The record gives the reactivity of an RNA of 207 nucleotides to 2A3 and DMS. For 2A3 the reverse transcriptase was SuperScript II with manganese. For DMS, 2,539 sequencing reads were counted. Reactivities are given for positions 27 through 156.

[RMDB]
RNA sequence: GGGAACGACUCGAGUAGAGUCGAAAAUAUCGCGAUUACCAGUAGUUUUACCCCAGCCACUGCCAAUGAUGUUUUUGUUACUGGAGUGGCAAAAAAUGGCGCGGUAGGCACAGCGUGUAAAGUGCUUGGAACAUCCAGCGGCACUCAGGUAACGACAUCAACGACUCAUAUUCGUAUGAGUCGUUGAAAAAGAAACAACAACAACAAC
Reactivity to 2A3 in 0.01 (KOAc 150mM, MgCl2 10mM, bicine 150mM(pH8.5), 24C), signal-to-noise 1, nucleotides 027 to 156: u030a000u040c020g000c000g030a030u060u280a080c000c000a010g070u080a030g010u000u020u130u300a110c040c040c030c010a000g030c000c020a040c050u300g160c030c000a040a070u080g090a030u050g150u060u090u000u170u300g070u060u120a040c020u020g030g010a040g000u020g000g000c010a020a020a020a020a020a020u090g000g030c010g000c070g050g010u020a020g020g010c010a030c000a070g030c110g010u000g010u030a130a160a220g040u010g030c000u030u020g000g030a210a030c040a110u100c000c000a000g010c070g020g000c000a000c000u050c040a010g000g030u020a000a090c050g020a010c010a080
Reactivity to DMS in 0.01 (KOAc 150mM, MgCl2 10mM, bicine 150mM(pH8.5), 24C), signal-to-noise 1, nucleotides 027 to 156: u010a070u010c030g040c020g000a190u000u010a060c030c030a130g020u000a080g020u020u000u000u000a090c020c040c000c000a260g010c010c000a020c020u000g060c000c000a030a050u000g020a020u000g030u000u010u000u010u000g020u000u000a030c020u000g020g010a110g020u000g030g020c000a010a000a030a030a030a030u000g000g000c060g000c030g020g050u000a010g020g030c060a140c060a110g030c070g010u030g020u010a060a060a100g000u000g030c010u010u020g020g030a130a100c110a100u000c040c030a110g010c060g020g000c020a050c030u000c030a090g000g020u000a050a100c040g030a120c050a130